[RMDB]
RNA sequence: GGGAACGACUCGAGUAGAGUCGAAAAGGAGGAGCCGUAGAGGAACAGGAGAAGAGACUGAUCUCCUGAGGAUUUUGAGUGUCUCGUUUUUCAAGUCACAGUUUUGUCUUGCUGAAAUCUGUGCUUCAAAUAUAUGGCUUAAGCUGCUAUGGUUUAACAGGUGAUUAAAUUUCGAUUUAAUCACCUGAAAAGAAACAACAACAACAAC
Reactivity to DMS in 0.01 (KOAc 150mM, MgCl2 10mM, bicine 150mM(pH8.5), 24C), signal-to-noise 2, nucleotides 027 to 156: g000g020a070g000g010a060g020c040c070g040u010a110g000a100g000g000a110a150c040a070g020g020a070g020a030a150g040a110g020a150c100u010g000a140u000c010u000c030c010u020g010a090g010g000a110u010u000u000u010g000a110g030u000g010u010c030u010c080g010u000u000u000u000u000c030a010a050g020u000c030a070c050a060g030u000u000u070u010g030u010c040u010u000g020c060u050g000a060a050a050u000c040u000g030u010g010c000u000u000c060a050a060a100u000a070u000a090u010g010g000c020u000u000a120a250g000c010u000g010c010u010a080u000g010g030u000u000u000a070a300
Reactivity to 2A3 in 0.01 (KOAc 150mM, MgCl2 10mM, bicine 150mM(pH8.5), 24C), signal-to-noise 4, nucleotides 027 to 156: g050g010a010g000g010a010g010c040c010g030u060a010g020a030g030g050a080a010c010a040g010g000a020g000a070a060g080a020g020a040c040u070g050a070u040c020u010c020c030u030g030a060g040g010a020u040u090u100u270g050a040g030u030g030u020c010u010c050g020u040u050u000u040u110c070a060a030g020u140c010a010c010a030g010u020u050u120u090g050u050c050u080u150g060c070u100g040a020a050a050u020c000u010g020u020g000c010u050u020c020a010a060a020u150a020u020a050u120g010g000c000u040u140a080a010g040c050u030g010c010u150a060u220g030g080u210u200u210a070a040